RNA sequence: GGGAACGACUCGAGUAGAGUCGAAAAAGCAGGAGUACGCUCCUGCAUGGGCAGACGAAUUGACCCCAACUGAAGUUCAAUUCUAACGUUAAAAGGAGUUUUAUAUGACUGGACGUACGCGUCCAGAUGACGAUUUCAUUCUUCGGAAUGAAAUCAACAAAGGAAUACAGUUCGCUGUAUUCCUUUGAAAAGAAACAACAACAACAAC
Reactivity to 2A3 in 0.01 (KOAc 150mM, MgCl2 10mM, bicine 150mM(pH8.5), 24C), signal-to-noise 3, nucleotides 027 to 156: a000g010c010a000g010g010a000g010u050a030c160g040c100u010c000c010u000g000c020a000u000g010g000g010c090a070g030a260c040g010a020a000u010u010g010a010c020c010c000c000a090a080c210u300g040a000a010g040u120u000c000a000a010u000u030c000u060a070a070c100g040u090u220a020a050a060a080g150g030a090g030u070u060u130u060a200u070a100u170g160a040c000u010g000g000a000c000g030u070a000c250g010c000g110u000c000c000a000g000a000u050g020a030c070g000a010u010u000u000c000a000u000u010c010u020u040c110g080g010a000a000u010g000a000a010a000u000c000a000a010
Reactivity to DMS in 0.01 (KOAc 150mM, MgCl2 10mM, bicine 150mM(pH8.5), 24C), signal-to-noise 3, nucleotides 027 to 156: a090g010c000a020g000g000a060g060u000a060c300g060c010u000c000c010u000g030c020a030u000g000g030g000c300a140g010a220c120g000a040a040u000u010g010a090c030c010c020c000a070a290c160u020g010a050a030g010u010u000c000a030a030u000u000c030u000a100a150c100g000u000u000a100a080a100a100g000g010a220g020u010u000u000u020a110u000a120u000g000a180c000u000g000g000a020c010g030u010a070c270g040c050g020u000c000c000a030g000a050u000g010a120c070g010a030u000u000u010c000a000u000u000c000u000u010c300g050g000a050a010u010g000a010a000a000u000c000a050a140

This 207-nucleotide RNA was probed chemically with 2A3 and DMS. Reactivities are given for positions 27 through 156. Conditions: 150 mM KOAc, 10 mM MgCl2 and 150 mM bicine (pH 8.5), 24 C. Source: RMDB library M2RFPK, as collected in RNAgym. 2A3 adducts were read by reverse transcription with SuperScript II with manganese. The DMS profile rests on 4,558 reads.